This 177-nucleotide RNA was probed chemically with 2A3 and DMS.
RNA sequence: GGGAACGACUCGAGUAGAGUCGAAAACCGGGGAAACCUACGCGAGCGAGGCGGAGAUCGAGCGCCAGUUCGAGCGCGGCUACCUGAAGUUGCUUCGGCUUCUUCUUGUUCGCUUCCUGCUUGGAACGCUAUAGGUGACGUUCGCGUCACCUAUAGCAAAAGAAACAACAACAACAAC
Reactivity to 2A3 in 0.01 (KOAc 150mM, MgCl2 10mM, bicine 150mM(pH8.5), 24C), signal-to-noise 1, nucleotides 027 to 126: c000c000g000g000g030g000a080a070a020c010c020u040a080c090g000c020g050a000g000c000g030a140g020g000c000g050g000a100g030a140u230c070g060a060g100c010g050c060c020a000g030u110u120c010g040a040g080c080g050c020g080g010c020u050a060c000c000u040g030a050a000g000u030u060g050c110u050u060c090g020g020c000u110u050c020u000u010c000u000u140g020u030u000c020g030c000u030u000c000c010u060g020c050u040u060g080g060a100a040c100
Reactivity to DMS in 0.01 (KOAc 150mM, MgCl2 10mM, bicine 150mM(pH8.5), 24C), signal-to-noise 1, nucleotides 027 to 126: c010c000g170g000g030g010a160a150a070c100c030u010a040c040g000c010g020a050g020c060g020a080g050g050c020g020g010a030g000a100u000c090g000a070g000c000g010c080c060a100g000u000u000c020g000a110g020c000g010c200g010g000c030u000a120c100c030u020g000a030a090g000u000u000g020c080u000u010c140g010g010c000u000u000c010u000u000c010u000u000g000u000u000c050g000c030u000u010c000c060u000g060c110u000u020g010g010a090a070c150

Background: 2A3 adducts were read by reverse transcription with SuperScript II with manganese. The reactions ran in a buffer of 150 mM KOAc, 10 mM MgCl2 and 150 mM bicine (pH 8.5), at 24 C.